[RMDB]
RNA sequence: GGGAACGACUCGAGUAGAGUCGAAAAGAUAUGGACCCUGGCUGCGAACGUCCUGGUCGGAAACGACCAUGACGGAGGUAUAGCAGGGUCCUAAGUCAAAACUAGGGAGAGUUCGCUCUCCCUAGAAGAAAUUAUGUCCGUUCGCGGACAUAAUUUCAAAAGAAACAACAACAACAAC
Reactivity to 2A3 in 0.01 (KOAc 150mM, MgCl2 10mM, bicine 150mM(pH8.5), 24C), signal-to-noise 1, nucleotides 027 to 126: g020a010u050a020u080g000g000a000c000c040c000u060g300g140c040u080g050c020g200a300a150c010g030u000c010c020u000g000g040u010c000g000g010a040a000a000c000g000a000c030c000a000u010g000a000c000g010g040a040g180g100u200a020u050a070g010c000a020g000g030g000u030c000c000u010a010a000g020u010c000a020a000a100a170c000u000a030g000g000g020a020g010a000g030u180u240c280g060c140u000c000u020c000c000c000u020a000g000a010a000
Reactivity to DMS in 0.01 (KOAc 150mM, MgCl2 10mM, bicine 150mM(pH8.5), 24C), signal-to-noise 2, nucleotides 027 to 126: g030a050u000a180u010g020g000a010c000c000c000u000g030g060c010u000g030c070g020a060a300c010g000u010c000c070u000g020g000u000c010g010g010a040a020a130c000g020a010c000c000a010u000g000a010c010g040g000a040g000g000u010a120u000a030g000c000a010g000g000g000u000c000c000u000a000a040g000u020c030a100a090a120a240c020u000a000g010g000g000a020g000a020g020u000u000c280g020c000u000c000u000c000c010c000u000a000g000a040a070
Structure probing data (2A3 and DMS) for a 177-nucleotide construct. For 2A3 the reverse transcriptase was SuperScript II with manganese. Reactivities are given for positions 27 through 126.